[RMDB]
RNA sequence: GGGAACGACUCGAGUAGAGUCGAAAAUUACCGCCCAGGAUGGGGUGCAGCGUUCCUGCAAUAUCCAGAGCACCUAGGUGCAGCCUUGUAGUUUUAGUGGACUUUAGGCUAAAGAAUUUCACUAGCAAAAAUCUUUAAGGGUUCGCCCUUAAAGAAACACACCUAGCAUGUUCGCAUGCUAGGUGUGAAAAGAAACAACAACAACAAC
Reactivity to 2A3 in 0.01 (KOAc 150mM, MgCl2 10mM, bicine 150mM(pH8.5), 24C), signal-to-noise 1, nucleotides 027 to 156: u100u010a190c020c050g050c000c000c000a020g030g040a020u010g000g000g000g030u030g000c030a030g000c030g040u050u080c000c030u020g000c000a020a090u100a100u230c050c030a040g010a010g050c000a010c030c070u100a150g000g170u030g000c010a000g030c030c000u040u050g050u160a000g000u100u000u050u000a030g000u020g000g000a010c030u050u020u020a000g010g000c000u020a050a270a000g000a020a030u010u150u100c010a000c000u020a010g050c030a070a060a120a190a230u020c000u010u010u020a010a010g090g040g010u000u130c230g070c000c000c000u000u010a000a000a000g000a030a030a000

Record summary
The record gives the reactivity of an RNA of 207 nucleotides to 2A3. Conditions: 150 mM KOAc, 10 mM MgCl2 and 150 mM bicine (pH 8.5), 24 C.